[RMDB]
RNA sequence: GGGAACGACUCGAGUAGAGUCGAAAAGAUAUGGAAUCGACUACCCACCUAUUAGUGCUAUGACCCAGCGAAUAUUCGGAAACGAAUAUACGCUGCAUAGCACUAAUAGAGGUCGAUUCCUAAGUCACCUUCUAUUUUUCUUCGGAAAAAUAGAAGGAAAAGAAACAACAACAACAAC
Reactivity to DMS in 0.01 (KOAc 150mM, MgCl2 10mM, bicine 150mM(pH8.5), 24C), signal-to-noise 3, nucleotides 027 to 126: g010a180u000a230u000g000g000a000a010u010c000g020a000c000u000a160c030c060c040a300c140c010u000a010u000u000a000g050u000g000c000u000a010u000g000a100c290c300c080a010g010c000g040a150a010u000a020u000u000c000g020g010a100a080a200c010g010a010a010u000a010u000a050c000g020c000u000g000c000a000u000a010g000c000a000c000u000a000a000u010a000g000a090g010g020u000c010g010a030u000u000c000c000u000a010a070g000u010c150a090
Reactivity to 2A3 in 0.01 (KOAc 150mM, MgCl2 10mM, bicine 150mM(pH8.5), 24C), signal-to-noise 2, nucleotides 027 to 126: g110a060u290a210u300g000g010a000a000u000c010g010a030c020u300a300c040c040c000a020c010c000u010a000u000u000a000g010u010g000c000u000a020u040g050a220c040c140c010a000g030c010g030a040a010u010a010u000u010c000g000g060a070a070a080c010g000a020a000u010a000u020a050c000g000c000u010g000c000a000u000a000g000c000a000c000u000a000a000u000a000g000a000g000g000u000c010g000a000u000u000c000c000u010a030a020g130u060c050a070